Chemical mapping of a 207-nucleotide RNA with 2A3. The reactions ran in a buffer of 150 mM KOAc, 10 mM MgCl2 and 150 mM bicine (pH 8.5), at 24 C. Reactivities are given for positions 27 through 156. The 2A3 profile rests on 445 reads.

RNA sequence: GGGAACGACUCGAGUAGAGUCGAAAACUUAUCCGGUUUUAACGCUGUUUUAUUGGCGCAAAGGUUUACGGAUAAACAACUACUAAUUAAACCUUUUGUGUGCGAAACGUGGUUGUUUAACGUACUCACUGCCCCCAGGGAUUCGUCCCUGGGGGAAUUCGCUAUUUCUGUUCGCAGAAAUAGCGAAAAAAGAAACAACAACAACAAC
Reactivity to 2A3 in 0.01 (KOAc 150mM, MgCl2 10mM, bicine 150mM(pH8.5), 24C), signal-to-noise 1, nucleotides 027 to 156: c020u030u040a010u010c000c000g040g080u030u080u070u000a090a020c020g020c010u070g140u160u140u080u300a140u200u270g050g000c030g030c070a080a010a000g000g000u000u000u000a020c020g020g020a050u050a030a050a000c000a020a020c000u120a020c010u040a090a110u140u080a050a020a030c000c000u060u070u130u160g080u010g020u010g070c100g000a080a000a080c030g010u010g010g050u070u000g010u030u020u060a010a000c010g010u030a040c000u030c000a110c050u060g040c000c000c000c000c000a000g000g030g000a020u080u090c070g020u000c090c000c020u000g000g020g000g000g000a000a000